Description:
The record gives the reactivity of an RNA of 177 nucleotides to DMS and 2A3.
[RMDB]
RNA sequence: GGGAACGACUCGAGUAGAGUCGAAAACGGCAUUCAAUACCUAGCUGGGCUAUCCACACUGCCAGGUAAUCCAACUGUGGCCUCACUGAUGGCCUUCACCGCCUCAGUUACUAGCCCCCUUGCUACACUGAGGGAUGAUAUUCGUAUCAUCCCUCAGAAAAGAAACAACAACAACAAC
Reactivity to DMS in 0.01 (KOAc 150mM, MgCl2 10mM, bicine 150mM(pH8.5), 24C), signal-to-noise 4, nucleotides 027 to 126: c120g030g000c050a080u000u000c050a090a120u000a060c080c030u000a070g020c030u000g010g020g000c080u010a080u020c050c060a050c110a090c070u000g020c030c020a100g010g010u000a050a100u010c050c050a050a120c050u010g020u000g000g000c080c060u000c090a080c060u000g010a060u000g030g020c010c060u000u000c160a060c110c180g000c040c010u000c010a010g030u000u000a070c100u000a080g010c040c020c010c070c070u000u000g020c050u010a050c210a120
Reactivity to 2A3 in 0.01 (KOAc 150mM, MgCl2 10mM, bicine 150mM(pH8.5), 24C), signal-to-noise 2, nucleotides 027 to 126: c030g050g000c030a060u060u120c100a050a130u090a150c000c020u020a050g030c050u030g010g000g000c010u060a050u100c000c010a040c000a020c030u060g000c000c000a010g030g000u040a060a100u090c050c030a050a010c060u050g000u080g150g010c020c040u070c000a060c010u060g040a080u230g080g000c030c000u080u060c080a080c040c010g010c040c010u010c030a000g000u020u040a060c060u070a020g070c030c000c000c000c050u040u080g000c010u010a030c060a000
Background:
For 2A3 the reverse transcriptase was SuperScript II with manganese. Reactivities are given for positions 27 through 126.